The record gives the reactivity of an RNA of 207 nucleotides to 2A3 and DMS. The reactions ran in a buffer of 150 mM KOAc, 10 mM MgCl2 and 150 mM bicine (pH 8.5), at 24 C. For DMS, 3,636 sequencing reads were counted. Values cover nucleotides 27 to 156.
[RMDB]
RNA sequence: GGGAACGACUCGAGUAGAGUCGAAAAUUGGCUUUCGAGCCAACCGGACCGUAGGGAGUCGAAUUUCCGAAGAACAUACGAUGUUAUAUUCGAAAGAGUAUAACUAAGUAUGGGAGGAAACGACUCCCUAAACGGCUGCAAGCAGAUUCGUCUGCAAAUCAAUUCAACAGUUCGCUGUUGAAUUGAUAAAAGAAACAACAACAACAAC
Reactivity to 2A3 in 0.01 (KOAc 150mM, MgCl2 10mM, bicine 150mM(pH8.5), 24C), signal-to-noise 2, nucleotides 027 to 156: u050u000g010g000c030u070u080u240c290g100a010g010c000c000a010a010c020c010g030g080a180c000c010g000u000a010g020g000g000a000g000u010c030g050a220a300u010u000u030c010c000g050a150a020g020a030a010c010a000u010a000c010g010a010u150g000u000u000a000u000a000u010u030c010g040a140a050a050g000a030g010u000a000u000a000a000c010u020a000a060g000u000a000u010g000g000g020a030g000g000a000a000a010c000g000a000c000u040c000c000c000u000a000a000a000c000g010g010c020u110g090c070a100a290g000c000a000g000a040u110u140c170g110u020c050u000g000c020a040a040
Reactivity to DMS in 0.01 (KOAc 150mM, MgCl2 10mM, bicine 150mM(pH8.5), 24C), signal-to-noise 2, nucleotides 027 to 156: u000u000g020g020c020u000u010u010c210g040a050g000c000c000a010a010c020c060g030g010a140c000c010g050u000a080g010g000g020a060g000u000c010g000a120a300u010u000u010c010c000g000a110a130g010a190a220c010a000u000a000c000g000a300u000g000u000u000a000u000a010u000u000c000g050a240a140a300g010a030g030u000a000u000a000a010c000u000a090a300g000u000a010u030g000g000g030a230g030g000a050a010a130c010g020a010c010u000c000c000c000u010a000a010a030c020g010g030c020u000g000c020a080a230g020c010a030g000a140u000u000c220g000u000c000u000g000c000a050a130